RNA sequence: GGGAACGACUCGAGUAGAGUCGAAAAUGGGGAAGACAUCAGCAGGUGUUGACUUGUGUUUUGCCUGGGACGUGCAGGACUGAAGUUCUCCCAUGUGCUUUCUGACAGGUUUCUCAGUGACAGUAAGGUGAAUGGGCAUCAAAUUGGGUUCAGAGAAUAAUAUGAUGGACUUCGGUCCAUCAUAUUAAAAAGAAACAACAACAACAAC
Reactivity to 2A3 in 0.01 (KOAc 150mM, MgCl2 10mM, bicine 150mM(pH8.5), 24C), signal-to-noise 2, nucleotides 027 to 156: u120g000g000g000g020a070a030g010a020c030a090u060c030a030g090c040a040g060g060u040g030u090u080g050a050c000u050u040g050u010g060u080u070u140u110g030c000c000u010g000g000g020a020c040g040u100g020c020a030g030g010a020c030u060g060a090a030g050u100u010c040u030c000c010c000a050u070g060u050g010c010u090u020u000c010u030g050a060c000a040g030g020u030u080u080c010u010c010a040g010u030g040a020c010a050g080u160a110a020g040g010u000g040a070a060u060g030g010g050c010a020u050c070a060a110a130u070u060g020g000g000u060u080c020a010g030a000g020a080a010
Reactivity to DMS in 0.01 (KOAc 150mM, MgCl2 10mM, bicine 150mM(pH8.5), 24C), signal-to-noise 2, nucleotides 027 to 156: u000g010g010g080g000a100a080g010a050c000a080u000c030a110g040c040a110g020g010u000g030u000u000g010a070c080u000u000g030u010g020u000u000u000u000g000c000c020u010g010g020g000a070c140g010u000g020c030a090g000g010a090c060u000g020a090a140g000u000u000c040u010c010c040c030a130u020g000u010g000c040u000u000u000c040u000g030a150c050a080g020g020u010u010u010c060u000c000a100g020u000g020a110c070a110g030u020a050a110g020g030u030g000a070a100u000g000g030g000c060a090u000c040a030a070a110u000u010g010g000g020u000u000c020a090g010a150g010a080a180
Source: RMDB library OK3TST, as collected in RNAgym. This 207-nucleotide RNA was probed chemically with 2A3 and DMS. Reactivities are given for positions 27 through 156. The reactions ran in a buffer of 150 mM KOAc, 10 mM MgCl2 and 150 mM bicine (pH 8.5), at 24 C.